This 177-nucleotide RNA was probed chemically with 2A3. The data come from the RNA Mapping Database (RMDB), library RFM100.

RNA sequence: GGGAACGACUCGAGUAGAGUCGAAAACCGUCGCUACUACCGAUUGAAUGGCUCAGUGAGGCCUUCGGACUGGCACAGGGACGUUGGCAACGACGACCCAGUGCCGGAAAGUUCGUCAAACUUGGUCACACUCGGCUUUCUUCGGAAAGCCGAGUGUAAAAGAAACAACAACAACAAC
Reactivity to 2A3 in 0.01 (KOAc 150mM, MgCl2 10mM, bicine 150mM(pH8.5), 24C), signal-to-noise 1, nucleotides 027 to 126: c000c000g040u090c000g060c110u220a060c000u070a010c050c000g070a100u030u070g010a110a060u050g010g000c000u030c050a040g010u000g030a010g010g010c010c000u020u000c000g030g010a010c020u010g000g000c020a000c000a060g000g000g000a000c000g010u000u000g000g100c000a070a110c030g010a000c000g070a070c000c000c000a000g000u000g000c000c010g000g040a000a000a000g000u030u000c000g010u010c020a000a110a000c020u000u020g010g000u000c020